An RNA of 177 nucleotides, treated with DMS and 2A3 and read out base by base. For 2A3, 4,096 sequencing reads were counted. For DMS, 3,471 sequencing reads were counted. The RNA was probed in 150 mM KOAc, 10 mM MgCl2 and 150 mM bicine (pH 8.5) at 24 C. 2A3 adducts were read by reverse transcription with SuperScript II with manganese.

[RMDB]
RNA sequence: GGGAACGACUCGAGUAGAGUCGAAAAAGUGCACCUUUGGGAACAUUAGUUCAUGCAAUUGAGCUCCAGCCUGGGAAAGGGGCACAAGUAGCACGCUCCGCUGGCUCUGCCGCACAAAUUGUAGCAAACUACAUACUCGGUUCGCCGAGUAUGUAGUAAAAGAAACAACAACAACAAC
Reactivity to DMS in 0.01 (KOAc 150mM, MgCl2 10mM, bicine 150mM(pH8.5), 24C), signal-to-noise 4, nucleotides 027 to 126: a090g030u000g030c030a090c030c010u000u000u000g020g020g010a090a060c090a150u000u010a050g010u000u010c020a070u000g020c150a090a090u020u000g000a060g000c020u010c110c100a100g010c040c030u010g010g000g000a050a040a070g000g010g010g020c030a050c080a040a090g030u010a070g000c040a070c100g000c020u000c040c040g000c070u000g000g000c030u010c060u000g000c010c070g030c060a070c160a050a060a090u000u010g000u000a040g000c100a090a110
Reactivity to 2A3 in 0.01 (KOAc 150mM, MgCl2 10mM, bicine 150mM(pH8.5), 24C), signal-to-noise 3, nucleotides 027 to 126: a010g060u050g000c010a040c040c000u070u060u070g030g020g020a110a030c050a120u120u130a080g030u030u030c020a010u100g040c030a060a210u110u050g000a020g010c010u000c030c020a040g030c010c030u140g030g030g060a060a080a020g020g010g010g020c010a010c010a040a040g060u080a010g000c050a010c130g000c020u020c030c030g040c040u050g010g020c000u000c050u090g000c020c020g040c060a040c030a050a080a070u140u170g030u060a020g000c020a080a100
Background
2A3 is a SHAPE reagent: it acylates the 2'-hydroxyl of flexible nucleotides of all four kinds.